[RMDB]
Overview
An RNA of 170 nucleotides, treated with 2A3 and DMS and read out base by base. The RNA was probed in 150 mM KOAc, 10 mM MgCl2 and 150 mM bicine (pH 8.5) at 24 C. The 2A3 profile rests on 32,328 reads.

RNA sequence: GGGAACGACUCGAGUAGAGUCGAAAAGGGGCGCCAGGAAGAGUCCGUAGCGAUAGGAGGGGAUGCUAGGAGUCGGCGGCGACCGAAGCGAGGAGGAAAGCAAAGAAAGCAACGGGGCUAGCGAGUGGGACUGAUGUGUUCGCACAUCAGAAAAGAAACAACAACAACAAC
Reactivity to 2A3 in 0.01 (KOAc 150mM, MgCl2 10mM, bicine 150mM(pH8.5), 24C), signal-to-noise 8, nucleotides 027 to 129: g020g000g000g020c050g020c030c020a020g020g030a030a050g040a010g100u040c030c030g110u080a040g020c030g060a070u110a080g020g010a020g020g010g010g010a010u080g020c020u040a030g010g040a030g040u070c030g010g010c020g010g000c040g020a030c010c010g010a020a010g030c040g020a020g010g010a000g000g010a050a010a000g010c050a010a030a050g050a050a070a010g020c010a010a080c060g030g000g000g000c020u040a030g020c010g020a010g020u090g010g010g030a020
Reactivity to DMS in 0.01 (KOAc 150mM, MgCl2 10mM, bicine 150mM(pH8.5), 24C), signal-to-noise 9, nucleotides 027 to 129: g000g030g000g010c110g000c030c060a110g000g000a070a040g000a040g030u040c040c030g000u040a060g020c070g030a120u040a040g030g020a020g040g010g020g020a070u000g020c090u040a070g000g000a080g000u030c070g020g030c120g000g000c120g040a070c040c030g030a120a080g020c160g020a060g040g010a010g000g000a020a000a020g030c230a070a050a100g000a040a040a040g030c000a060a100c150g010g000g000g010c060u020a050g000c070g020a070g040u050g020g030g000a130